[RMDB]
RNA sequence: GGGAACGACUCGAGUAGAGUCGAAAACGCUGGCGCCGGCUGGGCAACAUUCCGAGGGGACCGUCCCUCGGUAAUGGCGAAUGGGACCCAGAAAUCUCUCUAGAUUCCCAGAGAGAAUCGAGAGAAACUUACGUAAGUUGUUCGCAACUUACGUAAGAAAAGAAACAACAACAACAAC
Reactivity to 2A3 in 0.01 (KOAc 150mM, MgCl2 10mM, bicine 150mM(pH8.5), 24C), signal-to-noise 1, nucleotides 027 to 126: c000g000c040u050g050g000c080g030c020c010g150g050c040u020g030g000g040c010a080a030c010a040u050u000c010c010g040a000g000g000g000g070a230c050c080g300u300c000c010c010u010c010g000g000u010a000a010u020g010g000c030g000a020a080u110g020g000g080a030c010c000c000a000g040a010a130a050u050c020u020c020u000c010u050a100g000a150u050u000c000c030c040a060g070a000g000a010g000a130a040u050c050g000a040g000a000g000a080a070a050
Reactivity to DMS in 0.01 (KOAc 150mM, MgCl2 10mM, bicine 150mM(pH8.5), 24C), signal-to-noise 2, nucleotides 027 to 126: c130g010c050u000g000g000c020g000c080c020g040g000c010u000g010g020g000c030a120a100c020a040u000u010c000c010g000a040g000g000g000g000a170c300c300g000u000c010c000c000u000c000g010g010u010a000a030u000g000g000c100g010a080a150u000g000g010g010a100c030c000c050a050g010a100a090a090u000c000u000c000u000c000u000a090g000a090u000u000c010c020c070a110g010a120g000a140g010a010a020u000c020g010a030g000a050g010a060a050a180

The data come from the RNA Mapping Database (RMDB), library VIROID. An RNA of 177 nucleotides, treated with 2A3 and DMS and read out base by base. For 2A3, 1,316 sequencing reads were counted. Reactivities are rounded to 0.1 and cut off at 0 and 3.